[RMDB]
RNA sequence: GGGAACGACUCGAGUAGAGUCGAAAAAAUUGAGGAAAGGGGACGAGGCCUUUGCACCUCAGCAUACGCUGCCCCUGGGGGAGUGGUCUUCCUCUUAGAUGAAGCACUUCCCUUCAGCCAAAAGCAAGAGGUCACAGUUAUUCGUAACUGUGACCUCAAAAGAAACAACAACAACAAC
Reactivity to DMS in 0.01 (KOAc 150mM, MgCl2 10mM, bicine 150mM(pH8.5), 24C), signal-to-noise 1, nucleotides 027 to 126: a110a040u010u000g000a050g010g000a100a100a080g010g020g000g000a110c250g020a100g020g010c050c100u010u010u000g020c130a180c090c020u000c060a070g060c080a140u010a060c270g000c030u000g020c130c010c010c000u000g010g000g020g010g020a000g000u000g000g010u020c000u010u000c010c070u000c150u000u030a110g000a000u000g010a000a030g000c010a010c010u000u000c000c000c000u010u000c010a060g000c020c070a070a090a060a140g010c100a170a110
This 177-nucleotide RNA was probed chemically with DMS. DMS adducts were read by reverse transcription with MarathonRT. Reactivities are rounded to 0.1 and cut off at 0 and 3. The RNA was probed in 150 mM KOAc, 10 mM MgCl2 and 150 mM bicine (pH 8.5) at 24 C. Reactivities are given for positions 27 through 126.